[RMDB]
Source information
An RNA of 177 nucleotides, treated with DMS and read out base by base. The DMS profile rests on 773 reads.

RNA sequence: GGGAACGACUCGAGUAGAGUCGAAAAUGAACAUAUAGUUAAGGCAUCAUUGAACAGAGAUGAAAAUGCAAUUAUAGAAGACCCUAUGAUUCAGCUAAUACCAGAAAAACUGCGCAGAGAGUUGGGACUCUGUUUCUACUUUCGAGUAGAAACAGAGAAAAGAAACAACAACAACAAC
Reactivity to DMS in 0.01 (KOAc 150mM, MgCl2 10mM, bicine 150mM(pH8.5), 24C), signal-to-noise 2, nucleotides 027 to 126: u010g030a140a030c050a070u010a060u000a140g010u000u000a100a140g020g010c010a040u010c000a030u000u000g010a110a100c190a110g020a130g000a020u000g000a060a060a120a050u010g010c040a080a060u000u010a070u000a060g000a090a200g000a120c110c070c030u020a050u000g000a000u010u000c060a040g000c070u010a090a070u010a090c070c010a070g020a060a080a110a130a040c110u010g000c090g030c020a070g020a040g000a040g020u010u000g010g000g030a230
DMS adducts were read by reverse transcription with MarathonRT. It was measured as part of the RMDB library OK2TST.